About this RNA
The data come from the RNA Mapping Database (RMDB), library OK2TST. Structure probing data (2A3 and DMS) for a 177-nucleotide construct.
[RMDB]
RNA sequence: GGGAACGACUCGAGUAGAGUCGAAAACCUGCUCGGUGGCGGUCACAAUGCCCUCCCGCAUGAACAGGCCGUAAUCUUCAAAAAACUUUGCAUACUUCUCAGCAUCUUUUUUACUCUGGUCAAUGAACAACUUAGGGACUUUCGAGUCCCUAAGUUGAAAAGAAACAACAACAACAAC
Reactivity to 2A3 in 0.01 (KOAc 150mM, MgCl2 10mM, bicine 150mM(pH8.5), 24C), signal-to-noise 1, nucleotides 027 to 126: c000c010u030g070c050u050c040g040g050u010g040g050c030g020g010u060c000a040c010a160a110u140g010c000c030c000u070c060c020c010g070c020a050u080g010a080a030c070a120g070g000c040c020g050u070a070a070u000c160u210u140c180a110a110a000a000a000a050c090u180u110u070g000c010a040u030a120c020u070u020c030u010c020a010g010c010a000u040c000u070u060u040u020u030u010a000c000u030c030u010g010g060u040c070a050a130u280g050a180a020
Reactivity to DMS in 0.01 (KOAc 150mM, MgCl2 10mM, bicine 150mM(pH8.5), 24C), signal-to-noise 1, nucleotides 027 to 126: c010c000u000g040c060u010c120g020g020u020g000g040c060g000g020u000c050a110c150a120a040u020g000c050c040c100u000c030c020c010g030c110a040u000g000a120a120c120a080g000g040c020c100g000u000a060a050u000c000u000u010c120a000a060a080a070a050a110c070u000u000u000g010c060a060u000a070c090u000u000c030u000c060a050g000c030a010u000c010u000u000u000u010u010u000a070c030u000c060u000g010g020u000c060a080a150u000g000a080a120
Annotation:
The DMS profile rests on 883 reads. The reactions ran in a buffer of 150 mM KOAc, 10 mM MgCl2 and 150 mM bicine (pH 8.5), at 24 C. The 2A3 profile rests on 742 reads.